[RMDB]
RNA sequence: GGGAACGACUCGAGUAGAGUCGAAAACAGCCUGUUCGCAGGCUGAAAAAAGCGUACUACGCACUAUGACGAAGCUCCGAACUACGACUCUCCCAAAUAGGAGAGUCGCGGAGUCGAAUAGCUGCGUAUCGCAAAAAGCGGCGUUUCGACGCCGCAAACAAUUUAACUACUUCGGUAGUUAAAUUGUAAAAGAAACAACAACAACAAC
Reactivity to 2A3 in 0.01 (KOAc 150mM, MgCl2 10mM, bicine 150mM(pH8.5), 24C), signal-to-noise 2, nucleotides 027 to 156: c000a000g000c000c000u040g060u070u200c300g040c080a000g010g040c000u000g000a030a000a010a000a000a010g010c020g040u110a070c060u010a000c020g010c010a000c000u010a030u030g150a230c030g050a130a060g120c000u000c000c000g060a130a090c060u110a040c270g000a000c000u010c000u030c000c030c020a080a300a070u250a080g000g010a010g000a000g000u000c000g010c010g000g010a000g000u010c000g000a020a010u030a000g090c200u010g010c010g010u000a030u110c000g010c000a040a160a000a040a000g000c000g010g000c000g000u050u070u120c120g010a010c000g000c000c000g020c000a000a010
Reactivity to DMS in 0.01 (KOAc 150mM, MgCl2 10mM, bicine 150mM(pH8.5), 24C), signal-to-noise 1, nucleotides 027 to 156: c000a020g050c000c010u000g000u000u000c300g050c010a030g010g020c000u010g000a000a040a060a110a120a170g010c000g020u010a040c120u000a020c000g040c010a070c020u000a010u040g010a210c070g000a160a130g040c000u000c000c010g020a180a270c000u010a130c010g000a010c000u000c000u000c010c010c010a030a260a220u000a090g010g010a040g010a000g010u000c000g000c000g000g040a030g070u000c010g010a150a010u000a020g030c080u000g020c010g000u010a050u000c000g070c020a080a040a050a120a090g000c010g010g000c010g000u000u010u010c080g010a050c050g010c000c010g000c000a000a030